[RMDB]
RNA sequence: GGGAACGACUCGAGUAGAGUCGAAAAGUGCGAUGAGUCGAUAUGCAGAUUUUCUGCAAAUUGAAGCAUGGGAGGUCAUAACGCAGGAGCGGACCUUGAUCAGUUGUGUGAACCUGCUGAUCACACACCCUACACAAUGGUUCGCCAUUGUGUAGGGAAAAGAAACAACAACAACAAC
Reactivity to DMS in 0.01 (KOAc 150mM, MgCl2 10mM, bicine 150mM(pH8.5), 24C), signal-to-noise 2, nucleotides 027 to 126: g050u000g010c040g000a070u000g000a050g010u000c010g020a040u000a080u000g000c000a000g000a180u000u020u000u010c010u000g030c010a000a090a040u000u000g000a040a050g000c010a040u000g020g020g020a030g000g000u010c040a190u010a080a140c010g030c010a130g000g010a200g010c020g020g000a060c010c010u000u000g000a020u000c060a020g020u000u000g000u010g000u000g000a040a160c200c040u000g000c030u010g000a060u000c000a000c050a020c060a180
Reactivity to 2A3 in 0.01 (KOAc 150mM, MgCl2 10mM, bicine 150mM(pH8.5), 24C), signal-to-noise 2, nucleotides 027 to 126: g040u030g050c030g030a040u020g020a040g080u040c000g010a020u010a020u060g010c000a000g010a020u150u140u110u000c000u010g000c000a030a000a000u020u040g010a050a000g010c010a020u040g060g070g000a040g010g000u020c030a060u090a280a030c060g000c040a050g060g140a060g030c000g020g000a020c010c000u020u030g000a010u000c020a010g030u020u030g050u030g050u060g120a050a080c010c000u000g000c010u010g020a020u010c000a010c000a000c000a020
Chemical mapping of a 177-nucleotide RNA with DMS and 2A3. For DMS, 2,158 sequencing reads were counted. For DMS the reverse transcriptase was MarathonRT. High 2A3 reactivity points to a flexible backbone, as in loops and unpaired stretches. The reactions ran in a buffer of 150 mM KOAc, 10 mM MgCl2 and 150 mM bicine (pH 8.5), at 24 C.